[RMDB]
RNA sequence: GGGAACGACUCGAGUAGAGUCGAAAAGGCUGUAUGCCGAAAGCGUUUUGUGGACGGUAUACAGCAGAAAGCCCCAGGCGAUUUUUUUAUCAAUCAACCAGGGGCUCUACUGUAAUGCCUAGACAACUUCUAUAACUUAAUUCGUUAAGUUAUAGAAAAAAGAAACAACAACAACAAC
Reactivity to DMS in 0.01 (KOAc 150mM, MgCl2 10mM, bicine 150mM(pH8.5), 24C), signal-to-noise 6, nucleotides 027 to 126: g010g010c000u020g010u000a010u000g000c020c010g000a010a220a300g000c000g010u030u030u080u090g010u000g010g000a300c000g000g020u000a000u000a010c010a110g010c010a010g000a170a190a060g000c000c000c000c000a080g050g020c300g000a010u000u000u020u040u060u070u010a090u030c120a030a000u010c040a090a190c020c010a070g010g030g000g010c000u000c020u020a050c070u000g010u010a090a070u010g000c000c000u000a090g020a080c130a090a110c130
Reactivity to 2A3 in 0.01 (KOAc 150mM, MgCl2 10mM, bicine 150mM(pH8.5), 24C), signal-to-noise 7, nucleotides 027 to 126: g080g000c000u010g000u010a010u010g010c010c000g010a010a000a000g020c020g040u160u120u300u300g010u050g000g010a000c000g000g000u000a000u000a000c000a000g010c000a000g000a020a010a000g000c000c000c000c000a030g000g010c020g010a010u000u010u040u050u010u230u300a150u300c070a030a000u010c010a010a110c010c010a040g000g000g000g000c000u000c010u030a030c010u020g060u110a080a090u110g020c000c010u020a040g020a110c050a070a050c090